This 177-nucleotide RNA was probed chemically with DMS and 2A3.
2A3 adducts were read by reverse transcription with SuperScript II with manganese.
For 2A3, 1,979 sequencing reads were counted.
Values cover nucleotides 27 to 126.
The reactions ran in a buffer of 150 mM KOAc, 10 mM MgCl2 and 150 mM bicine (pH 8.5), at 24 C.

RNA sequence: GGGAACGACUCGAGUAGAGUCGAAAAACGACGGGUAACGACGCAACACCGCCGGACGCGAUCACCGAAAUCGGGGCGGUCAAGGUAUGCGGCGGCGCGGUGCUCGGUGAAUUCGCCACCCUGGUAAACUACAUGCGACAUUCGUGUCGCAUGUAGUAAAAGAAACAACAACAACAAC
Reactivity to DMS in 0.01 (KOAc 150mM, MgCl2 10mM, bicine 150mM(pH8.5), 24C), signal-to-noise 2, nucleotides 027 to 126: a090c080g050a030c090g000g010g000u000a050a090c030g010a050c100g010c040a020a070c100a070c050c000g010c010c000g020g000a100c090g030c170g000a030u010c030a050c010c010g010a100a080a090u010c110g000g020g000g040c060g010g000u000c020a090a190g000g000u020a060u010g020c020g010g000c000g010g020c070g010c300g000g020u000g030c120u000c000g080g010u010g010a030a110u010u000c070g000c010c040a130c030c000c030u020g010g020u000a040a060
Reactivity to 2A3 in 0.01 (KOAc 150mM, MgCl2 10mM, bicine 150mM(pH8.5), 24C), signal-to-noise 1, nucleotides 027 to 126: a020c050g130a010c040g000g080g020u060a090a040c020g120a040c000g000c030a050a070c040a050c070c000g000c010c010g050g060a060c070g000c030g060a040u040c000a020c050c000g100a100a110a040u220c050g020g000g080g070c060g000g020u030c030a090a060g060g030u150a030u280g140c050g000g000c000g000g050c010g000c050g020g030u000g000c020u030c010g000g060u060g040a020a060u160u050c030g020c010c020a040c030c010c020u070g000g100u150a160a050